[RMDB]
RNA sequence: GGGAACGACUCGAGUAGAGUCGAAAACUGUGCGGGCAGCGACGACACCGACCCCGGUCAAGCUCGACGCAACUUGCUGUCGAAGCUGGACUCGAUCAAGUUUGCAUCAGGUGCCACGGCAGUGGUCGUGCAUCUCACUGACCGGGCCAGCACGAAGAAGUGAAGUAGAGUUCGCUCUACUUCACUUAAAAGAAACAACAACAACAAC
Reactivity to DMS in 0.01 (KOAc 150mM, MgCl2 10mM, bicine 150mM(pH8.5), 24C), signal-to-noise 2, nucleotides 027 to 156: c040u000g000u000g010c000g010g010g060c030a080g010c040g010a130c060g000a120c020a070c030c020g020a100c030c010c010c030g050g020u000c000a050a100g000c040u000c020g000a060c020g070c010a080a120c080u010u000g020c080u010g060u000c010g000a040a090g030c030u000g030g030a210c080u000c020g010a070u010c020a040a090g010u000u000u030g030c040a100u000c040a090g030g000u010g020c000c010a060c040g020g030c080a270g050u010g040g020u010c010g010u000g030c030a080u000c020u000c060a090c050u010g000a050c010c020g000g020g000c010c010a040g000c010a110c050g010a080a160g010
Reactivity to 2A3 in 0.01 (KOAc 150mM, MgCl2 10mM, bicine 150mM(pH8.5), 24C), signal-to-noise 4, nucleotides 027 to 156: c040u060g030u040g040c040g010g020g020c040a080g040c060g100a040c030g000a030c040a040c090c050g090a130c010c000c000c010g000g010u020c040a060a050g030c050u070c140g050a040c070g010c010a040a130c060u090u130g040c100u150g060u030c000g030a050a020g020c040u060g020g060a090c020u010c050g010a030u050c040a040a040g020u050u110u120g070c050a090u080c060a080g000g050u040g090c150c070a030c010g040g000c030a150g090u150g200g010u080c010g000u030g000c010a030u010c020u030c000a030c060u010g030a100c010c000g000g000g000c000c000a000g010c000a000c050g050a040a080g060